This 177-nucleotide RNA was probed chemically with 2A3 and DMS.
[RMDB]
RNA sequence: GGGAACGACUCGAGUAGAGUCGAAAAUAUGCCAUAUUAUCCUUGCAUGUAAAUUUUGAGGACCACAUAACUGGGUUUUAAAAAUCUGGUUCUAACAGUAGUUUAUGUCUUAGAAAUCAGGGCAAAGCAUAUCUACUACCUUCGGGUAGUAGAUAUGAAAAGAAACAACAACAACAAC
Reactivity to 2A3 in 0.01 (KOAc 150mM, MgCl2 10mM, bicine 150mM(pH8.5), 24C), signal-to-noise 2, nucleotides 027 to 126: u140a040u040g050c010c010a060u080a110u230u100a070u090c010c010u000u030g020c010a040u070g030u190a070a130a130u060u070u020u040g050a040g000g020a010c010c020a030c070a140u150a130a020c050u060g060g100g000u010u020u070u200a140a190a020a000a010u010c010u020g020g000u030u000c020u050a080a060c020a070g150u210a030g000u080u060u120a070u120g030u000c000u000u020a020g050a030a060a010u060c020a030g000g060g000c040a070a010a010g020
Reactivity to DMS in 0.01 (KOAc 150mM, MgCl2 10mM, bicine 150mM(pH8.5), 24C), signal-to-noise 5, nucleotides 027 to 126: u010a060u010g000c040c050a110u020a080u000u010a120u010c020c030u000u000g020c090a040u000g010u010a050a060a070u000u000u000u010g010a130g000g010a020c010c200a050c100a090u010a050a040c090u010g020g010g010u000u000u000u010a030a120a070a070a030u000c020u010g010g010u000u000c070u000a050a060c090a070g010u010a050g010u000u000u000a040u020g000u010c050u010u000a160g000a030a020a030u000c080a060g000g010g010c070a040a050a100g010